[RMDB]
RNA sequence: GGGAACGACUCGAGUAGAGUCGAAAAUACUUAGUACGCGCGUAGUUGCUGGCAUUCCGGGUGCAGCAACUGACGCGGAAGACUUUUCCCAGAGUGUGCGCUUCAACUGGCGUGCUGAGUAGUGCACGAAUUGCACGUACGUUCGCGUACGUGCAAAACAGUAAUGUCGUUUCGACGACAUUACUGUAAAAGAAACAACAACAACAAC
Reactivity to DMS in 0.01 (KOAc 150mM, MgCl2 10mM, bicine 150mM(pH8.5), 24C), signal-to-noise 2, nucleotides 027 to 156: u010a050c070u010u000a060g040u000a060c060g010c010g010c010g030u010a020g030u000u000g010c000u000g010g010c000a040u010u000c000c300g000g020g160u000g000c050a300g000c030a020a030c000u000g010a020c010g000c020g020g030a020a120g010a080c130u000u000u000u000c010c000c030a270g000a150g010u000g030u010g030c040g020c020u000u010c050a110a210c070u000g000g000c050g020u000g010c010u000g010a080g000u010a090g020u010g000c030a100c020g020a080a220u010u000g000c000a030c000g020u010a000c000g040u010u000c290g020c030g030u010a010c000g020u000g020c010a000a000a070
Reactivity to 2A3 in 0.01 (KOAc 150mM, MgCl2 10mM, bicine 150mM(pH8.5), 24C), signal-to-noise 2, nucleotides 027 to 156: u100a000c000u010u010a000g000u020a000c010g000c000g000c000g010u000a000g000u000u010g010c010u050g150g060c040a040u150u070c060c160g190g000g050u040g010c000a000g000c000a000a000c010u060g130a010c000g010c000g000g000a000a000g120a110c010u190u140u030u000c000c000c000a000g000a000g030u130g000u010g000c000g000c030u060u040c100a300a300c110u030g010g000c000g000u010g000c000u000g000a010g000u080a000g010u010g000c020a010c010g030a060a080u040u010g000c010a000c000g000u010a000c010g000u010u040c210g010c000g050u000a000c020g010u000g000c000a000a000a000
Source: RMDB library M2RFOK, as collected in RNAgym. An RNA of 207 nucleotides, treated with DMS and 2A3 and read out base by base. The 2A3 profile rests on 1,925 reads. 2A3 adducts were read by reverse transcription with SuperScript II with manganese. DMS (dimethyl sulfate) methylates the pairing face of unpaired adenines and cytosines. The reactions ran in a buffer of 150 mM KOAc, 10 mM MgCl2 and 150 mM bicine (pH 8.5), at 24 C.